[RMDB]
RNA sequence: GGGAACGACUCGAGUAGAGUCGAAAAGAUAUGGAAAUCCGAUGGUCUUGGAUUUACCCGUAAGGCUAUAUAUCGGAAACGAUAUAAACGCCUUACGGGUUGUCAGACCUAAGGAUUUCCUAAGUCAUCCGUUAAAAGAGUUCGCUCUUUUAACGGAAAAAGAAACAACAACAACAAC
Reactivity to DMS in 0.01 (KOAc 150mM, MgCl2 10mM, bicine 150mM(pH8.5), 24C), signal-to-noise 2, nucleotides 027 to 126: g000a040u000a300u000g020g010a010a000a010u000c000c000g000a260u010g010g000u000c020u020u020g020g030a010u000u010u000a010c000c000c000g030u010a000a010g000g000c000u000a300u000a000u000a000u000c000g000g020a180a110a220c010g030a020u000a000u000a000a060a280c300g000c000c000u000u010a000c000g000g000g010u000u000g000u000c000a020g000a000c000c000u020a180a220g000g010a000u000u000u000c000c010u010a010a050g000u010c020a150